[RMDB]
RNA sequence: GGGAACGACUCGAGUAGAGUCGAAAAAAACCCUCUUGGUAGCUUCGUUCUAAGUGCUUCCAAGAUAUGAGUGAAUGCUAUAGAAAUUGCAGGGGAGUCCAAAGGGCUGCGCUUCUCCCGUGGCUCAGUGCCCGAUUGAAUUCGUUCAAUCGGGCACAAAAGAAACAACAACAACAAC
Reactivity to 2A3 in 0.01 (KOAc 150mM, MgCl2 10mM, bicine 150mM(pH8.5), 24C), signal-to-noise 1, nucleotides 027 to 126: a000a000a000c020c000c000u010c000u000u000g000g000u000a000g100c010u070u090c050g300u000u100c090u230a090a090g130u060g000c000u000u030c010c000a010a010g000a020u080a240u100g110a030g040u090g040a040a010u060g000c000u010a030u040a110g050a070a090a040u080u090g000c000a000g000g090g000g000a040g070u040c030c000a130a080a100g090g020g000c000u010g000c030g000c000u040u040c000u020c000c000c000g000u020g060g000c000u030c080a000